[RMDB]
RNA sequence: GGGAACGACUCGAGUAGAGUCGAAAAGUAAUAGAUAACUGGAUGCAGCGUAGGCUCCAACGCAUAUCCAGUACGAAUGGUACCUGUAAAUAAAAUAUGGGGCCUAGUACAAGUACCAACAGAAGGAUAAGCGAUGGUGAUGUCAAUCACAUUUGCACACGUAAAAUCCUUUCGAGGAUUUUACGUGAAAAGAAACAACAACAACAAC
Reactivity to 2A3 in 0.01 (KOAc 150mM, MgCl2 10mM, bicine 150mM(pH8.5), 24C), signal-to-noise 3, nucleotides 027 to 156: g040u080a030a170u060a160g070a090u140a110a090c020u000g030g000a020u080g140c300a170g000c200g000u030a020g000g000c010u000c000c000a010a000c000g000c000a010u010a000u130c000c010a010g020u010a030c010g070a030a140u090g010g000u020a060c000c000u000g010u020a010a100a120u120a010a100a150a010u190a050u040g000g000g000g000c000c000u000a010g020u000a000c000a010a040g000u000a020c040c000a000a030c020a040g100a120a050g100g030a050u050a120a070g030c040g070a020u100g070g080u010g000a020u030g120u160c100a060a070u040c010a010c000a060u080u090u190g020c010a020
Reactivity to DMS in 0.01 (KOAc 150mM, MgCl2 10mM, bicine 150mM(pH8.5), 24C), signal-to-noise 1, nucleotides 027 to 156: g010u010a050a190u000a100g000a200u000a120a110c020u000g000g010a060u000g020c000a070g000c000g010u010a080g060g030c000u000c010c020a120a030c020g000c010a060u000a060u000c010c000a000g020u020a060c050g020a150a070u000g000g000u000a000c000c020u030g060u000a010a140a110u000a120a160a080a220u000a160u010g000g000g020g000c020c000u000a120g010u010a030c020a000a070g000u000a040c010c000a020a260c060a100g010a110a090g010g010a110u000a080a110g000c070g000a030u000g010g030u010g060a040u000g000u020c260a150a070u020c020a030c030a120u020u000u000g030c030a300